[RMDB]
RNA sequence: GGGAACGACUCGAGUAGAGUCGAAAAACGCAAUUAUUCACCGCAGCAGUAUAUGCGCAGUGAAGAAGAAAUGUGCGAGCUGUUCUCCGAUAUUCCGGAGGCGCUGGAAAAUACGGUGGAGAUUGCCCGUACCACUGACCUUCGGGUCAGUGGUACGAAAAGAAACAACAACAACAAC
Reactivity to 2A3 in 0.01 (KOAc 150mM, MgCl2 10mM, bicine 150mM(pH8.5), 24C), signal-to-noise 3, nucleotides 027 to 126: a000c050g000c010a000a000u020u030a270u230u050c000a000c030c040g000c010a010g010c000a000g030u100a100u060a060u300g070c020g000c010a050g080u170g140a070a080g050a090a010g080a040a230a050u140g050u060g030c040g000a010g020c000u040g080u260u020c000u000c000c000g020a090u070a290u300u020c120c000g030g020a010g010g000c000g000c010u020g070g030a020a090a000a000u100a030c000g020g000u000g010g010a000g000a010u000u010g000c040c000
Reactivity to DMS in 0.01 (KOAc 150mM, MgCl2 10mM, bicine 150mM(pH8.5), 24C), signal-to-noise 1, nucleotides 027 to 126: a160c260g000c070a010a050u000u010a120u000u000c020a010c000c010g000c190a080g050c040a030g000u040a120u020a110u030g000c080g100c000a020g020u000g000a140a120g000a110a090g000a070a010a040u050g020u010g010c020g000a070g010c050u000g000u050u000c000u000c030c000g050a240u000a140u000u060c200c020g000g000a010g000g000c070g020c000u040g000g000a060a070a160a070u010a120c020g020g000u010g000g000a050g000a040u000u020g000c000c140

An RNA of 177 nucleotides, treated with 2A3 and DMS and read out base by base. Source: RMDB library OK1LIB, as collected in RNAgym. For DMS, 1,620 sequencing reads were counted.